RNA sequence: GGGAACGACUCGAGUAGAGUCGAAAAUGGGCGUACCUACGGGAAUCCCUGGUUUCCUCUGAUGUCCAGUCCCUCCCCCAUCCGAGAGAAGGGGGACUCCGGAACACCUUCCAUCCGAGGGACGAAGCCGCCACCGGGCGCUCCCCUCGGACUUCCUCUUAUUACAUCCCUUCGGGGAUGUAAUAAGAAAAGAAACAACAACAACAAC
Reactivity to 2A3 in 0.01 (KOAc 150mM, MgCl2 10mM, bicine 150mM(pH8.5), 24C), signal-to-noise 1, nucleotides 027 to 156: u030g010g000g010c020g010u100a160c010c060u060a100c050g050g020g020a030a080u120c130c090c050u090g090g000u030u000u030c060c000u110c110u090g090a120u120g000u040c010c020a000g060u010c000c000c010u020c000c010c000c010c000a010u020c030c040g140a120g010a030g020a200a080g010g000g000g000g000a000c030u070c080c060g050g050a090a050c050a160c100c070u140u040c030c010a040u010c000c000g000a040g000g000g000a000c130g060a090a020g100c210c070g060c080c000a300c140c210g130g080g040c010g010c000u010c010c000c000c000u000c000g000g000a010c000u010u000c010c010u000
The record gives the reactivity of an RNA of 207 nucleotides to 2A3.